[RMDB]
RNA sequence: GGGAACGACUCGAGUAGAGUCGAAAAGAGCGGCGAAAAUGCAGUGGGAACGCCUGCAACGCGGUGUUGCGUCAUUCUCGCUACAACUGGCGGAAGGUCGGGCAGAUCUCUACACGGAAAUGCCUGUGAAGGUCAGUGGCUUUAAACAGCCAAUAGAAGUUCUAUAGUGUUUCGACACUAUAGAACUAAAAGAAACAACAACAACAAC
Reactivity to 2A3 in 0.01 (KOAc 150mM, MgCl2 10mM, bicine 150mM(pH8.5), 24C), signal-to-noise 2, nucleotides 027 to 156: g060a010g020c030g030g000c030g040a050a010a020a060u110g000c040a030g020u080g050g040g020a060a000c030g020c020c030u090g010c030a040a000c040g050c060g120g090u120g020u070u060g010c000g030u020c000a010u100u030c040u030c020g000c010u060a060c040a170a060c040u040g040g000c030g050g060a050a040g050g050u080c020g010g000g000c010a010g010a040u010c030u000c030u140a100c100a020c110g010g000a020a040a010u010g010c000c000u000g010u030g040a030a010g030g010u040c030a010g040u030g040g000c000u050u070u050a050a070a020c050a020g020c010c000a010a000u100a050g140a160
Reactivity to DMS in 0.01 (KOAc 150mM, MgCl2 10mM, bicine 150mM(pH8.5), 24C), signal-to-noise 3, nucleotides 027 to 156: g010a090g030c010g020g010c030g010a050a090a080a120u000g000c050a040g020u000g000g040g010a070a050c030g000c040c040u010g030c020a040a050c020g010c040g020g030u000g010u000u000g010c000g030u000c040a080u000u030c010u000c000g030c030u030a050c020a090a120c050u000g030g050c010g020g010a110a100g020g020u010c060g010g010g000c040a050g010a190u000c010u010c040u030a130c140a120c100g000g000a040a130a260u000g010c020c000u010g010u020g000a130a110g010g030u010c020a070g020u000g000g010c020u000u010u000a090a080a100c140a060g010c010c010a050a100u010a070g000a180